An RNA of 177 nucleotides, treated with 2A3 and read out base by base. The reactions ran in a buffer of 150 mM KOAc, 10 mM MgCl2 and 150 mM bicine (pH 8.5), at 24 C.
[RMDB]
RNA sequence: GGGAACGACUCGAGUAGAGUCGAAAACGGUUCGUCAAACAAGAAUAAGAGCUCUUACGGUUCCAACAAUGACGAUUCUUAUGGCUCUAACAAUGAUGAUUCAUAUGGUUCUUCCAACAAGAAGAAGGCCAUCCACUAUCUUCGGAUAGUGGAUGGCAAAAGAAACAACAACAACAAC
Reactivity to 2A3 in 0.01 (KOAc 150mM, MgCl2 10mM, bicine 150mM(pH8.5), 24C), signal-to-noise 2, nucleotides 027 to 126: c000g050g000u270u220c000g000u000c040a000a070a130c020a040a110g100a290a000u220a120a020g000a010g000c010u050c100u300u200a000c080g020g000u080u000c070c050a000a000c150a120a260u040g000a000c000g000a000u170u000c000u130u030a070u190g000g000c000u000c000u020a130a030c090a050a060u110g120a120u030g000a060u190u180c000a080u130a040u170g110g000u020u000c040u150u050c000c000a170a110c020a230a000g010a000a000g050a010a000g090